[RMDB]
RNA sequence: GGGAACGACUCGAGUAGAGUCGAAAAAUGAAAGGUCAAGUUAAGUGGUUCAACGAGUCUAAAGGCUUCGGUUUCAUCACUCCUGCUGAUGGUAGCAAAGACGUUUUCGUUCACUUCUCUGCCAUUCUCGCAAUAGCCUAUUCGUAGGCUAUUGCGAAAAAGAAACAACAACAACAAC
Reactivity to DMS in 0.01 (KOAc 150mM, MgCl2 10mM, bicine 150mM(pH8.5), 24C), signal-to-noise 2, nucleotides 027 to 126: a020u050g020a040a050a080g000g040u020c100a110a070g000u000u000a050a080g010u000g020g000u000u070c140a050a090c020g020a060g000u000c000u070a080a120a050g000g000c010u000u050c030g030g000u040u010u020c010a060u000c030a010c010u000c110c060u040g020c070u000g000a030u010g000g010u000a010g040c050a030a140a030g000a070c050g000u040u020u060u000c010g000u000u000c080a010c060u000u000c030u030c000u000g000c010c010a000u040u000c020
Reactivity to 2A3 in 0.01 (KOAc 150mM, MgCl2 10mM, bicine 150mM(pH8.5), 24C), signal-to-noise 2, nucleotides 027 to 126: a040u130g080a050a040a060g030g010u100c060a020a040g000u040u040a000a000g000u010g060g050u100u040c030a010a000c020g000a000g000u030c010u090a060a150a010g070g000c010u060u030c010g060g040u030u100u110c000a020u000c010a010c000u150c010c010u100g010c090u030g010a050u030g030g060u020a010g000c000a100a080a000g020a020c030g000u000u000u000u140c040g010u070u100c000a000c060u030u000c010u010c000u030g000c010c000a000u020u000c010

Source: RMDB libraries RFM100 and RFMREP, as collected in RNAgym.
Structure probing data (DMS and 2A3) for a 177-nucleotide construct.
Conditions: 150 mM KOAc, 10 mM MgCl2 and 150 mM bicine (pH 8.5), 24 C.
For DMS the reverse transcriptase was MarathonRT.